[RMDB]
RNA sequence: GGGAACGACUCGAGUAGAGUCGAAAACAAUUUUUGUACUACACAAAAGUACUGGUCAUUUAAGUUGAGGCUCAGCACUUUUGUGGUGUGCAAAAAUGGCAAAGAACGCGCACUUCGGUGCGCGUUCGUCAAAUCUUAUCUUCGGAUAAGAUUUGACAAAAGAAACAACAACAACAAC
Reactivity to DMS in 0.01 (KOAc 150mM, MgCl2 10mM, bicine 150mM(pH8.5), 24C), signal-to-noise 2, nucleotides 027 to 126: c030a100a020u010u000u010u000u020g010u010a030c010u000a300c000a010c020a000a030a010a000g020u000a020c000u000g010g000u030c010a150u010u010u010a100a140g000u010u010g000a140g010g000c010u010c010a010g020c030a000c000u010u000u000u000g020u040g010g000u000g020u000g000c000a000a010a010a010a000u010g010g000c200a090a100a090g010a010a010c000g000c000g030c010a000c000u010u020c200g030g030u000g000c010g030c000g000u000u000c010
Reactivity to 2A3 in 0.01 (KOAc 150mM, MgCl2 10mM, bicine 150mM(pH8.5), 24C), signal-to-noise 3, nucleotides 027 to 126: c010a040a020u000u020u010u020u010g000u020a010c010u070a060c000a010c000a020a010a000a010g000u020a020c010u000g000g030u020c090a200u030u090u300a280a180g190u180u230g180a100g020g010c060u040c290a000g010c030a020c000u010u020u000u010g010u000g000g000u000g000u000g010c000a000a000a000a010a000u020g080g000c070a230a190a070g000a010a000c020g050c010g000c030a020c010u050u080c240g090g000u000g000c010g010c000g020u010u000c000

Conditions: 150 mM KOAc, 10 mM MgCl2 and 150 mM bicine (pH 8.5), 24 C.
This 177-nucleotide RNA was probed chemically with DMS and 2A3.